[RMDB]
RNA sequence: GGGAACGACUCGAGUAGAGUCGAAAAAGCACCGGUACUACGGUACCGGUGCAGGCCUGGGAGAUCCUCUUUGGAUCGUCGGAGUUAACUCCGCCCGGGCCUACGUCGGCGGUACGCCGCCGACGAAGCUCCUUAUGGAUUUCGAUCCAUAAGGAGCAAAAGAAACAACAACAACAAC
Reactivity to 2A3 in 0.01 (KOAc 150mM, MgCl2 10mM, bicine 150mM(pH8.5), 24C), signal-to-noise 1, nucleotides 027 to 126: a000g030c020a020c020c020g050g010u010a000c000u010a030c240g100g020u020a000c000c000g000g000u010g000c040a000g010g000c010c000u000g010g040g010a170g020a000u000c020c000u140c150u250u250u300g000g010a000u000c000g030u010c000g000g020a010g000u150u300a250a200c000u000c000c000g010c020c000c020g040g000g000c010c000u000a020c010g000u000c000g000g000c000g010g000u080a060c300g130c060c000g000c000c000g010a000c010g010a020a010
An RNA of 177 nucleotides, treated with 2A3 and read out base by base. For 2A3, 740 sequencing reads were counted. The RNA was probed in 150 mM KOAc, 10 mM MgCl2 and 150 mM bicine (pH 8.5) at 24 C.